Annotation: The record gives the reactivity of an RNA of 177 nucleotides to 2A3 and DMS. The 2A3 profile rests on 11,144 reads.
RNA sequence: GGGAACGACUCGAGUAGAGUCGAAAAUGCGCAGGAGCGGAUACCCACUUGUACGUCUUCCUCCCGGAUAACCUCCACCGACUCUGUGGAACCGCGUUCGGCAACAUACCGUCAACGUGUCAUUGGCCCUAACAAAAGAGUUCGCUCUUUUGUUAGGAAAAGAAACAACAACAACAAC
Reactivity to 2A3 in 0.01 (KOAc 150mM, MgCl2 10mM, bicine 150mM(pH8.5), 24C), signal-to-noise 5, nucleotides 027 to 126: u070g010c040g010c020a030g020g110a050g030c040g010g030a040u130a120c000c030c000a030c030u030u110g080u120a060c060g040u010c040u050u000c010c000u000c000c000c010g010g000a040u060a080a050c010c020u020c010c000a020c010c020g070a070c010u020c030u090g030u030g010g030a010a010c020c020g020c010g020u040u020c020g020g010c020a020a010c010a070u100a050c000c010g010u030c010a030a010c030g030u020g050u080c020a050u010u030g040g000c000
Reactivity to DMS in 0.01 (KOAc 150mM, MgCl2 10mM, bicine 150mM(pH8.5), 24C), signal-to-noise 7, nucleotides 027 to 126: u000g010c100g020c040a090g000g000a120g020c040g000g000a120u000a110c070c010c010a090c110u010u010g010u000a050c110g000u000c040u000u000c040c020u000c030c020c030g010g000a100u010a060a130c100c040u000c020c010a080c050c050g000a080c030u000c050u000g010u010g010g000a090a120c100c040g010c050g000u000u000c040g000g000c030a050a100c150a090u010a090c050c030g000u000c080a050a100c070g010u000g010u010c080a140u000u010g010g010c120
Background:
For DMS the reverse transcriptase was MarathonRT.